[RMDB]
RNA sequence: GGGAACGACUCGAGUAGAGUCGAAAACGACCCACUCCUCCUCCCUAGGGGCGUCCGAUGGAACGGUGGCACUCCUCCUCCCAGCCGCUGUUCACUCUUUUAAAAAGCCUGCCGCACCUCCUCCCGCUCCAUAGACAUGCUUCGGCAUGUCUAUGGAAAAAGAAACAACAACAACAAC
Reactivity to 2A3 in 0.01 (KOAc 150mM, MgCl2 10mM, bicine 150mM(pH8.5), 24C), signal-to-noise 3, nucleotides 027 to 126: c040g100a070c010c000c010a010c020u030c010c010u010c000c000u050c000c000c000u060a060g020g030g010g020c010g020u030c030c020g080a110u180g080g040a030a010c030g020g000u010g000g000c030a040c110u100c010c030u080c030c010u010c010c020c000a020g010c020c000g000c010u010g030u020u010c010a060c000u080c000u020u100u110u230a060a140a000a010a000g010c010c000u020g020c010c010g000c000a020c010c000u020c000c010u010c000c010c010g000c020
Reactivity to DMS in 0.01 (KOAc 150mM, MgCl2 10mM, bicine 150mM(pH8.5), 24C), signal-to-noise 2, nucleotides 027 to 126: c250g020a180c030c010c030a170c120u000c020c000u000c030c000u020c010c020c030u000a150g000g000g000g040c040g010u000c060c030g000a120u030g000g020a030a030c030g020g040u010g000g000c040a220c100u020c080c010u000c060c050u010c010c020c050a110g000c020c010g000c000u000g000u000u020c010a110c150u010c010u000u010u000u040a040a090a120a200a110g010c040c020u000g000c030c000g000c030a100c040c020u000c030c020u000c000c000c020g000c140